[RMDB]
Annotation
An RNA of 177 nucleotides, treated with DMS and 2A3 and read out base by base. DMS (dimethyl sulfate) methylates the pairing face of unpaired adenines and cytosines. The RNA was probed in 150 mM KOAc, 10 mM MgCl2 and 150 mM bicine (pH 8.5) at 24 C. DMS adducts were read by reverse transcription with MarathonRT. For 2A3 the reverse transcriptase was SuperScript II with manganese.
RNA sequence: GGGAACGACUCGAGUAGAGUCGAAAAGGGGCGAAUCUCGCGGCGGUCAACGCGCCGCACUCGGUGGUGGUUUCAGGGUGCGAGGCAGCGGUCAGCGAUAUUGCCGAUCACUUUGCCCGCAGGGGCCGGAGCAUUCAUUAUUCGUAAUGAAUGCUCCAAAAGAAACAACAACAACAAC
Reactivity to DMS in 0.01 (KOAc 150mM, MgCl2 10mM, bicine 150mM(pH8.5), 24C), signal-to-noise 5, nucleotides 027 to 126: g010g020g010g000c090g010a090a070u010c120u020c180g020c000g000g010c020g020g020u000c210a110a140c230g000c000g000c020c010g010c020a040c070u000c030g000g010u000g000g020u000g010g000u000u000u020c110a130g000g000g010u000g010c020g000a100g030g020c030a040g020c060g000g020u000c010a030g010c020g010a140u000a120u000u010g020c010c020g000a030u000c030a050c030u010u010u000g010c010c000c010g010c080a080g010g000g000g010c270c190
Reactivity to 2A3 in 0.01 (KOAc 150mM, MgCl2 10mM, bicine 150mM(pH8.5), 24C), signal-to-noise 2, nucleotides 027 to 126: g020g000g000g050c060g050a070a060u080c090u060c200g020c030g030g020c020g000g040u180c110a120a080c060g020c010g010c100c000g000c000a000c010u040c030g080g000u080g010g040u070g010g060u110u140u080c050a030g030g010g040u080g020c020g000a130g010g000c010a000g010c030g010g020u020c010a000g010c000g050a090u070a160u300u290g000c000c010g000a020u020c000a010c020u100u120u110g000c000c000c000g000c020a020g010g010g020g010c050c090